An RNA of 177 nucleotides, treated with DMS and 2A3 and read out base by base. For 2A3 the reverse transcriptase was SuperScript II with manganese. Reactivities are rounded to 0.1 and cut off at 0 and 3. DMS (dimethyl sulfate) methylates the pairing face of unpaired adenines and cytosines. For 2A3, 1,954 sequencing reads were counted.
RNA sequence: GGGAACGACUCGAGUAGAGUCGAAAAAGCUUGCGCGGUUUGGAUGCAGUCUGCUUACUCGUCGAGACUCCCGGUACGUAUCCUGACCCUAAAGCGGCAUCGCGGGUCGUAGAGGCCCUCAACGAGGGAUGCCAGACUAUUUCGAUAGUCUGGCAUCAAAAGAAACAACAACAACAAC
Reactivity to DMS in 0.01 (KOAc 150mM, MgCl2 10mM, bicine 150mM(pH8.5), 24C), signal-to-noise 3, nucleotides 027 to 126: a130g000c000u000u000g020c110g020c150g020g000u010u000u010g010g010a050u000g010c070a140g010u000c060u000g000c050u010u000a090c060u000c030g010u000c080g000a130g000a080c070u000c030c050c030g010g010u000a070c110g000u000a040u010c020c010u010g010a050c020c010c050u000a090a060a090g020c040g000g000c110a070u000c040g010c080g000g000g020u010c010g010u000a110g010a190g000g020c020c010c000u000c030a080a080c060g010a050g010g000
Reactivity to 2A3 in 0.01 (KOAc 150mM, MgCl2 10mM, bicine 150mM(pH8.5), 24C), signal-to-noise 2, nucleotides 027 to 126: a020g020c020u090u090g020c040g010c120g080g000u030u020u040g060g010a040u060g050c040a020g080u030c020u040g020c010u060u030a080c000u010c120g100u050c080g030a040g030a080c010u010c000c020c000g000g070u090a040c030g000u010a030u000c000c000u000g020a040c000c000c030u120a100a100a020g020c000g020g000c020a070u110c030g020c050g030g010g020u010c020g000u040a080g050a060g130g000c000c020c060u000c030a020a050c040g030a020g010g100